[RMDB]
RNA sequence: GGGAACGACUCGAGUAGAGUCGAAAACUACAGCUUGUGGGAGUGUUUACAGUCAGCUGUAUUGACUCCAAGAACAAACCCUUGACGACAGGGCAUUGCCUCAUGUCAAAUAAAAGUAGUGCACAAAGUAGUGAAACUCUGUGUUUUGCUGACCCCACAUAGGGCUACCAUUCGUGGUAGCCCUAUGAAAAGAAACAACAACAACAAC
Reactivity to 2A3 in 0.01 (KOAc 150mM, MgCl2 10mM, bicine 150mM(pH8.5), 24C), signal-to-noise 2, nucleotides 027 to 156: c020u060a020c010a040g090c060u130u110g000u080g060g060g020a050g000u020g090u120u060u050a000c040a030g020u060c020a030g090c060u010g000u060a030u040u070g050a000c000u020c030c000a130a050g080a060a020c080a030a000a060c010c010c000u000u120g030a020c050g040a000c020a050g000g000g040c050a190u070u300g000c010c010u050c040a110u050g000u040c000a000a010a100u100a010a030a000a020g000u020a000g010u020g040c020a000c010a030a080a000g050u080a060g030u080g100a120a110a000c010u010c040u080g050u010g000u090u000u090u090g000c010u000g010a040c020c040c000c020a020